Chemical mapping of a 207-nucleotide RNA with DMS and 2A3. For DMS, 3,880 sequencing reads were counted. The reactions ran in a buffer of 150 mM KOAc, 10 mM MgCl2 and 150 mM bicine (pH 8.5), at 24 C. For DMS the reverse transcriptase was MarathonRT.
RNA sequence: GGGAACGACUCGAGUAGAGUCGAAAAUGGUAGUCCGCCACUCUAAGGGGACGCCUUUAGAAGAAGAGGCUAGGUGGUUUUCCGGUGUGGGAUACUUGGUAAUAUGUAACGCUAAUUGCAUAAGAUUAAAACUUUGCAUACUUCGGUAUGCAAAGAACGUUUCAUUAGUGUUCGCACUAAUGAAACGAAAAGAAACAACAACAACAAC
Reactivity to DMS in 0.01 (KOAc 150mM, MgCl2 10mM, bicine 150mM(pH8.5), 24C), signal-to-noise 2, nucleotides 027 to 156: u010g030g040u000a050g040u020c040c030g000c000c010a150c070u000c070u000a050a080g000g000g020g010a080c180g000c010c040u000u000u010a040g010a090a090g000a180a110g010a080g000g030c050u020a050g050g030u010g000g030u000u000u000u000c050c010g050g010u010g020u010g000g030g000a100u000a070c080u000u000g030g010u000a020a160u000a070u020g020u000a040a050c070g020c090u010a060a120u000u000g000c010a050u000a060a100g000a170u000u000a060a070a140a140c000u010u000u000g000c020a020u000a010c000u000u010c300g020g000u010a010u000g000c000a000a010a010g010a030a080
Reactivity to 2A3 in 0.01 (KOAc 150mM, MgCl2 10mM, bicine 150mM(pH8.5), 24C), signal-to-noise 5, nucleotides 027 to 156: u110g020g020u030a120g030u020c020c020g070c090c030a090c030u120c060u120a130a170g010g010g010g010a020c010g030c000c000u090u070u060a160g000a210a010g020a040a010g010a020g020g010c050u040a020g060g000u020g040g000u040u010u070u080c040c010g030g010u050g010u030g030g010g010a030u030a070c030u040u070g010g010u070a080a060u050a080u140g050u030a040a020c030g030c100u060a110a060u060u060g000c020a040u050a100a060g040a090u100u180a040a120a010a040c000u000u000u000g000c000a000u000a000c000u010u020c060g060g000u010a000u000g000c000a000a000a000g000a020a010